[RMDB]
RNA sequence: GGGAACGACUCGAGUAGAGUCGAAAAUAGAUUCCCAGAGAGAAUCGAGAGAAAACUGGCUCUCCCUUAGCCAUCCGAGUAGGACGUCUGUCCUCCUACGGAUGCCCAGGUCGGACCGCGGGGAGGUGAAGCGAGACGUUCGCGUCUCGCAAAAGAAACAACAACAACAAC
Reactivity to 2A3 in 0.01 (KOAc 150mM, MgCl2 10mM, bicine 150mM(pH8.5), 24C), signal-to-noise 4, nucleotides 027 to 129: u170a010g130a070u020u030c010c000c060a000g050a000g020a000g020a080a070u100c050g010a010g000a000g020a110a060a000a070c030u040g000g000c000u000c000u000c010c010c000u080u100a010g020c020c000a000u000c000c000g020a000g000u010a000g000g000a010c020g170u130c200u300g000u000c000c000u020c000c000u130a160c000g020g000a000u000g000c000c020c000a030g020g020u080c060g030g040a050c000c030g050c020g030g020g000g020a010g020g010u070g010a010a000
Reactivity to DMS in 0.01 (KOAc 150mM, MgCl2 10mM, bicine 150mM(pH8.5), 24C), signal-to-noise 4, nucleotides 027 to 129: u050a150g090a060u010u020c010c020c030a210g020a110g010a090g040a050a010u020c090g000a100g000a000g020a020a070a070a060c170u000g000g000c090u030c010u010c040c000c060u030u030a180g040c150c030a000u070c010c040g010a030g000u030a060g010g030a020c000g030u060c090u110g010u020c020c000u000c040c070u010a130c040g010g020a050u000g030c050c040c050a120g060g080u020c030g030g020a050c030c040g000c000g060g000g010g000a040g000g000u000g040a090a100
The record gives the reactivity of an RNA of 170 nucleotides to 2A3 and DMS. For 2A3, 9,322 sequencing reads were counted. 2A3 adducts were read by reverse transcription with SuperScript II with manganese. DMS adducts were read by reverse transcription with MarathonRT.